[RMDB]
RNA sequence: GGGAACGACUCGAGUAGAGUCGAAAAUUAAUCCGGCUUUAAGUUGACGAGGGCACGGUUUAUCGAGACAUCGGCGGGUGCCCUGCGGUCUUCCUGCGACCGUUAGAGGACUGGUAAACCAAUUUAAAACAUGGUCUCAUUUCGAUGAGACCAUGUUAAAAGAAACAACAACAACAAC
Reactivity to DMS in 0.01 (KOAc 150mM, MgCl2 10mM, bicine 150mM(pH8.5), 24C), signal-to-noise 1, nucleotides 027 to 126: u000u000a100a110u000c020c000g020g000c030u000u010u000a020a120g000u030u000g020a080c080g000a050g010g020g000c050a060c040g000g030u000u040u020a060u010c010g020a130g010a070c260a080u010c040g020g040c060g010g010g010u000g000c000c000c000u000g000c020g000g000u000c000u030u000c060c030u000g010c190g000a010c040c030g020u000u010a060g000a120g030g000a030c070u000g010g020u000a010a050a080c110c020a080a090u010u000u000a050a040